This 177-nucleotide RNA was probed chemically with DMS and 2A3. Conditions: 150 mM KOAc, 10 mM MgCl2 and 150 mM bicine (pH 8.5), 24 C. High DMS reactivity at an A or C suggests that its Watson-Crick edge is free.

[RMDB]
RNA sequence: GGGAACGACUCGAGUAGAGUCGAAAAAGUUUAGAUUUCGAUCUAAACUAGACCACUAAGACGAUGACGAGUGACUACGACGCAUCUAGUAGAAUGCGCCCAGCUGUGAGCAGUUCGCUGCUCACAAUCGCUUCUUUUUAUUCGUAAAAAGAAGCGAAAAAGAAACAACAACAACAAC
Reactivity to DMS in 0.01 (KOAc 150mM, MgCl2 10mM, bicine 150mM(pH8.5), 24C), signal-to-noise 6, nucleotides 027 to 126: a030g010u000u000u000a000g000a020u000u000u010c140g010a020u000c000u000a000a000a010c000u000a060g000a250c040c010a100c140u010a080a120g000a070c080g000a080u000g000a110c050g010a100g010u000g010a120c070u010a060c070g010a090c050g010c020a020u000c030u000a110g010u010a080g000a050a030u000g000c050g000c000c000c100a110g020c160u000g000u000g010a010g010c000a000g000u010u010c190g000c000u000g000c000u020c000a010c020a020a060
Reactivity to 2A3 in 0.01 (KOAc 150mM, MgCl2 10mM, bicine 150mM(pH8.5), 24C), signal-to-noise 5, nucleotides 027 to 126: a000g020u010u000u000a010g000a020u030u040u100c240g040a000u000c000u010a000a000a010c000u000a010g020a040c020c000a030c070u080a070a060g100a060c060g080a070u090g050a010c040g020a030g050u050g050a080c050u050a040c160g090a030c020g020c020a020u010c020u030a030g030u010a020g060a210a040u050g010c010g030c010c010c010a030g030c070u080g000u000g010a000g000c000a010g010u020u080c180g010c060u000g000c000u000c000a000c000a010a010